Structure probing data (DMS and 2A3) for a 177-nucleotide construct.
The reactions ran in a buffer of 150 mM KOAc, 10 mM MgCl2 and 150 mM bicine (pH 8.5), at 24 C.
The 2A3 profile rests on 1,626 reads.
Values cover nucleotides 27 to 126.
The DMS profile rests on 757 reads.
For 2A3 the reverse transcriptase was SuperScript II with manganese.
RNA sequence: GGGAACGACUCGAGUAGAGUCGAAAAGGGAUAUUGUUCGCAAUAUCCCAAAAGGAACCAGGCACGGUGCCUGAGAACUGAAUAGCUAAUACGCAAGCUAAAAAACCACGGAGUUCGCUCCGUGGAACGCCCUUAGUAAGUUCGCUUACUAAGGGCGAAAAGAAACAACAACAACAAC
Reactivity to DMS in 0.01 (KOAc 150mM, MgCl2 10mM, bicine 150mM(pH8.5), 24C), signal-to-noise 1, nucleotides 027 to 126: g000g000g040a010u010a010u000u000g010u000u040c110g040c020a020a000u010a000u000c000c000c000a000a040a120a080g020g000a060a210c040c000a040g000g090c010a170c260g010g000u010g000c000c000u020g010a010g020a050a210c030u000g000a100a080u000a080g010c010u000a070a060u010a100c300g050c210a080a060g000c030u010a010a060a070a110a070a070c030c000a000c020g000g000a010g010u000u000c250g000c000u000c000c010g000u000g000g000a050a000
Reactivity to 2A3 in 0.01 (KOAc 150mM, MgCl2 10mM, bicine 150mM(pH8.5), 24C), signal-to-noise 1, nucleotides 027 to 126: g020g000g000a000u010a010u010u010g020u010u020c100g000c050a000a010u000a000u000c000c000c000a000a030a010a040g040g000a050a020c030c000a010g030g000c010a000c220g300g030u120g020c000c010u040g020a090g030a050a040c010u050g020a060a060u030a030g000c010u020a020a110u110a140c090g040c110a050a020g010c030u120a150a080a000a000a070a070c000c020a010c000g020g010a030g010u080u050c070g020c070u000c000c010g000u000g020g010a000a000